[RMDB]
This 207-nucleotide RNA was probed chemically with DMS and 2A3.
RNA sequence: GGGAACGACUCGAGUAGAGUCGAAAAUGCACUGUAUAACCACCUUGAGACGCACAACCCUGAGGCUGCACAGUCGCUGGAUAAUGCGUUGACCAAUCGUGACUUAGCGACCGUUAAGGCUAUCAUCAACUUGGCUGGUGAGUCUCGCGCUAAGGCGCGAGGAGGUCUUCUUCGGAAGACCUCCUCGAAAAGAAACAACAACAACAAC
Reactivity to DMS in 0.01 (KOAc 150mM, MgCl2 10mM, bicine 150mM(pH8.5), 24C), signal-to-noise 3, nucleotides 027 to 156: u000g010c050a120c040u000g010u000a120u000a100a120c020c020a080c040c030u010u020g010a280g000a050c000g010c040a060c050a180a070c050c000c020u000g010a070g020g000c000u010g010c170a140c120a040g030u000c020g000c020u000g010g030a070u000a060a070u000g000c040g020u000u000g000a210c120c040a070a120u010c070g040u010g010a050c040u010u010a050g010c000g010a070c070c040g010u000u010a070a070g030g020c030u000a070u000c060a050u000c020a020a000c040u010u020g050g020c040u010g050g030u000g010a080g020u000c020u000c050g040c030g010c020u010a040a040g000g010c020g010
Reactivity to 2A3 in 0.01 (KOAc 150mM, MgCl2 10mM, bicine 150mM(pH8.5), 24C), signal-to-noise 2, nucleotides 027 to 156: u110g000c020a020c120u070g060u150a130u080a170a090c040c030a070c010c050u070u080g090a060g020a060c010g030c010a020c030a060a090c010c000c000u030g010a030g040g000c020u110g050c170a070c040a130g010u010c010g000c050u010g020g010a040u080a210a030u110g000c000g000u010u030g030a030c010c050a060a120u090c040g020u050g090a100c010u020u020a000g000c000g080a130c100c010g070u080u190a070a020g010g000c010u090a110u200c020a010u000c000a010a110c070u170u210g130g020c040u010g040g000u000g010a000g000u010c010u000c020g000c000g000c000u020a020a020g010g000c010g010

The 2A3 profile rests on 5,490 reads.